[RMDB]
RNA sequence: GGGAACGACUCGAGUAGAGUCGAAAACGAUGUCUGGUUGCUCUUGUAACGUAGCAAGGCGUGCGUUGUGGGCGGAGCAGUUUGCGAUUGGUUAUUUGUCCACGCUAGCCAAUCACAAGCAACCAUCGGAGGAGCUGCACGUCAUCACGCCAAAAUCACCAAUUGCAUCGUUCGCGAUGCAAUUGGUAAAAGAAACAACAACAACAAC
Reactivity to 2A3 in 0.01 (KOAc 150mM, MgCl2 10mM, bicine 150mM(pH8.5), 24C), signal-to-noise 2, nucleotides 027 to 156: c000g020a020u130g040u090c090u070g140g010u010u000g030c060u020c090u120u120g130u190a140a000c130g080u000a020g080c090a070a180g000g000c020g000u010g040c080g020u000u090g010u060g020g000g020c030g040g000a170g030c000a020g000u030u070u010g050c020g020a000u000u010g000g000u040u000a000u080u110u130g120u000c080c000a040c050g010c060u000a000g000c020c000a000a000u030c000a010c010a100a060g000c030a010a060c030c020a040u140c040g150g010a070g020g010a040g040c000u000g000c030a000c010g000u000c050a020u190c000a010c050g000c000c000a010a030a030a070u230c060